[RMDB]
RNA sequence: GGGAACGACUCGAGUAGAGUCGAAAAUGAUCACCGGCGACAACGCCCGCACGGCUGCCGCGAUCGCCAAGCAGGUCGGCAUCGAGAAGGUGCUGGCCGAGGUGUUGCCGCAGGACAAGGUAGCUGACUACGGAGGAGGAUUCGUCCUCCUCCGUAGAAAAGAAACAACAACAACAAC
Reactivity to DMS in 0.01 (KOAc 150mM, MgCl2 10mM, bicine 150mM(pH8.5), 24C), signal-to-noise 3, nucleotides 027 to 126: u020g010a140u000c100a130c060c030g000g010c020g020a020c030a050a030c030g000c010c020c160g020c120a110c300g000g000c030u000g030c030c060g020c060g010a060u020c100g040c030c030a160a300g020c050a180g010g040u000c020g010g010c010a020u020c000g000a140g020a130a070g000g030u000g000c030u000g010g000c020c000g000a030g000g010u000g010u000u010g000c020c020g020c020a060g020g010a110c070a070a070g010g030u010a080g010c030u000g020a290
Reactivity to 2A3 in 0.01 (KOAc 150mM, MgCl2 10mM, bicine 150mM(pH8.5), 24C), signal-to-noise 2, nucleotides 027 to 126: u140g030a070u060c020a030c050c000g020g040c000g010a010c020a060a010c010g000c000c010c000g050c020a030c040g020g000c000u080g060c010c080g130c070g100a170u080c050g030c030c000a030a000g090c030a050g050g030u000c000g000g000c000a000u020c030g120a120g070a300a120g040g040u000g010c020u000g040g000c000c000g000a020g010g000u000g020u030u040g020c040c000g000c020a040g050g060a030c070a060a050g070g030u070a040g060c030u060g050a080